[RMDB]
RNA sequence: GGGAACGACUCGAGUAGAGUCGAAAAGAUAUGGAUGGACUUUGGGAGCCUUUCCGUCGGAAACGACGGUUAGGCUUUGAUCAAACAUGUCCAUCCUAAGUCAAAACACAUGACUUCGGUCAUGUGAGACGACUGAAAACUUCGGUUUUCAGUCGUCAAAAGAAACAACAACAACAAC
Reactivity to DMS in 0.01 (KOAc 150mM, MgCl2 10mM, bicine 150mM(pH8.5), 24C), signal-to-noise 1, nucleotides 027 to 126: g000a030u010a180u000g000g000a000u000g000g010a010c020u000u000u030g030g040g010a120g050c000c000u010u010u000c000c000g040u000c000g020g000a090a040a050c000g010a000c000g000g040u000u000a010g000g050c010u000u010u010g020a090u000c150a090a070a220c290a020u010g020u000c010c000a020u000c000c000u000a010a070g000u010c030a050a060a120a300c000a000c000a010u000g010a020c000u000u020c210g030g000u000c000a000u000g000u010g000a050

Chemical mapping of a 177-nucleotide RNA with DMS. For DMS, 1,015 sequencing reads were counted. It was measured as part of the RMDB library TTRDES. Reactivities are given for positions 27 through 126. For DMS the reverse transcriptase was MarathonRT.